[RMDB]
RNA sequence: GGGAACGACUCGAGUAGAGUCGAAAAGAGGGCAGCACUGCCUGUUGCUGGCAUUUCCGGAUACUUCAAGUUAGGUCAGUAAUAUUCGGCAGAGGGAACUGUACCAGGUGUAUCCUUUUUGUAAGUCCCUAGGACGUAGGUUCGCCUACGUCCUAGGAAAAGAAACAACAACAACAAC
Reactivity to DMS in 0.01 (KOAc 150mM, MgCl2 10mM, bicine 150mM(pH8.5), 24C), signal-to-noise 4, nucleotides 027 to 126: g020a110g000g000g010c070a120g000c050a190c020u000g000c000c000u010g030u020u000g000c000u000g010g000c000a030u000u010u010c020c230g000g000a110u040a070c170u030u010c180a150a140g000u000u000a040g000g030u000c000a020g010u020a010a020u020a080u040u020c150g000g000c020a020g010a080g020g030g010a040a090c070u010g030u020a100c080c070a050g000g000u020g000u010a040u000c010c010u000u040u010u000u000g010u000a100a090g000u010c090
Reactivity to 2A3 in 0.01 (KOAc 150mM, MgCl2 10mM, bicine 150mM(pH8.5), 24C), signal-to-noise 6, nucleotides 027 to 126: g130a020g000g030g040c040a010g010c030a010c030u010g010c010c020u010g010u000u000g000c010u010g010g000c010a040u030u010u040c030c040g080g010a150u170a230c100u120u120c080a160a040g030u050u030a050g080g000u000c000a000g010u020a020a020u030a110u100u280c010g010g000c000a000g030a110g100g050g010a060a090c030u070g030u150a300c030c010a050g020g010u090g030u080a120u140c010c000u060u080u010u060u100g120u100a100a110g060u060c030
Chemical mapping of a 177-nucleotide RNA with DMS and 2A3.
Conditions: 150 mM KOAc, 10 mM MgCl2 and 150 mM bicine (pH 8.5), 24 C.